Chemical mapping of a 177-nucleotide RNA with 2A3. Source: RMDB library M2PK50, as collected in RNAgym. The reactions ran in a buffer of 150 mM KOAc, 10 mM MgCl2 and 150 mM bicine (pH 8.5), at 24 C.
RNA sequence: GGGAACGACUCGAGUAGAGUCGAAAAUGACGUCGUUUCGACGACGUCAACAUAAAAUCAGCGGUAAAUAAUUAGGAGGCGUUACCGCUGAACCCCUCCAUACGAGAGGGCUAUUCGUAGCCCUCAACCGAAUUCAGCAGUUCGCUGCUGAAUUCGGAAAAGAAACAACAACAACAAC
Reactivity to 2A3 in 0.01 (KOAc 150mM, MgCl2 10mM, bicine 150mM(pH8.5), 24C), signal-to-noise 1, nucleotides 027 to 126: u080g030a000c010g000u010c010g010u000u050u010c190g060a010c010g010a000c000g000u000c000a000a000c010a000u080a010a030a000a100u020c000a000g020c000g000g000u020a110a040a070u130a060a130u210u200a080g140g040a050g070g000c090g000u000u000a000c000c000g000c000u000g000a000a000c010c000c000c010u000c000c030a060u070a110c120g050a140g000a000g120g010g020c000u030a010u040u080c190g070u020a000g020c000c000c000u000c000a000a000